[RMDB]
RNA sequence: GGGAACGACUCGAGUAGAGUCGAAAACGCAAGCAAUUGAGCACAGGUGAGCAGCUCUACGUGCUGGACGACAAUAAGUUCAUCUGCAAGGACGACUAUCUGCUGGGCAAGGCGCCAUCCUGCGGCCACUCUCUUACGCGUUCGCGCGUAAGAGAGUAAAAGAAACAACAACAACAAC
Reactivity to DMS in 0.01 (KOAc 150mM, MgCl2 10mM, bicine 150mM(pH8.5), 24C), signal-to-noise 2, nucleotides 027 to 126: c110g020c110a080a090g010c100a100a120u000u000g010a100g030c060a090c080a090g000g000u010g000a090g060c110a040g000c070u020c050u020a070c170g000u000g010c040u020g010g000a090c080g010a050c110a110a120u000a150a120g010u000u000c050a050u000c080u000g010c120a110a090g010g000a030c020g000a070c090u000a050u010c030u000g000c030u000g010g010g000c040a110a080g010g010c060g020c020c040a070u000c010c020u000g010c060g010g000c070c080
Reactivity to 2A3 in 0.01 (KOAc 150mM, MgCl2 10mM, bicine 150mM(pH8.5), 24C), signal-to-noise 1, nucleotides 027 to 126: c010g020c040a010a030g000c000a050a160u110u100g010a050g040c030a010c030a080g000g050u090g000a040g010c010a010g060c000u000c040u090a060c080g050u050g060c020u020g000g010a030c050g000a000c040a130a060u110a160a040g050u070u000c020a020u020c040u010g040c030a040a030g040g020a020c030g010a000c060u030a020u190c010u010g020c060u020g060g010g040c030a050a060g070g000c060g000c030c000a050u070c020c000u030g020c030g020g040c020c000